[RMDB]
Chemical mapping of a 207-nucleotide RNA with DMS and 2A3.

RNA sequence: GGGAACGACUCGAGUAGAGUCGAAAAUGACUACACUAUGUCAGACCUGAAGCCAACACAGCACUUGAUCUUGCCCAAGGCCUGCUGUAACCACUCCCUGGCUACACUACUGCCUAUAUGUACUCAAGGCCCUGGGGCUCUUCAAUCAGCAGGUGAACAAUAAUCGUACCUUCGGGUACGAUUAUUGAAAAGAAACAACAACAACAAC
Reactivity to DMS in 0.01 (KOAc 150mM, MgCl2 10mM, bicine 150mM(pH8.5), 24C), signal-to-noise 2, nucleotides 027 to 156: u020g000a110c020u000a120c030a150c050u010a120u010g020u010c020a070g030a090c020c010u000g010a140a060g010c020c030a120a070c040a080c080a080g090c070a040c030u000u010g000a070u000c050u000u000g010c040c050c050a090a130g010g010c010c060u000g030c040u000g020u010a060a030c040c060a050c010u010c040c040c060u000g020g020c070u000a030c020a080c070u010a080c070u010g030c080c090u000a140u000a130u010g010u010a020c050u010c050a050a120g010g070c040c000c030u010g010g050g000g050c050u010c030u010u030c070a100a120u000c030a070g000c010a040g050g000u000g000a090a160
Reactivity to 2A3 in 0.01 (KOAc 150mM, MgCl2 10mM, bicine 150mM(pH8.5), 24C), signal-to-noise 4, nucleotides 027 to 156: u090g010a010c020u060a020c090a050c090u150a130u200g010u030c040a040g030a110c010c000u040g090a070a030g020c030c010a060a040c090a020c030a050g080c020a040c060u010u040g050a050u080c040u060u140g050c020c000c010a050a040g060g010c000c000u010g010c000u010g020u090a060a060c070c040a040c080u010c010c000c000u020g010g000c010u060a000c010a010c050u170a040c040u070g070c060c030u100a110u040a020u280g070u080a050c020u050c090a040a040g030g000c000c010c040u030g000g000g000g000c010u010c020u110u100c040a050a160u010c000a000g030c000a000g000g040u040g030a060a010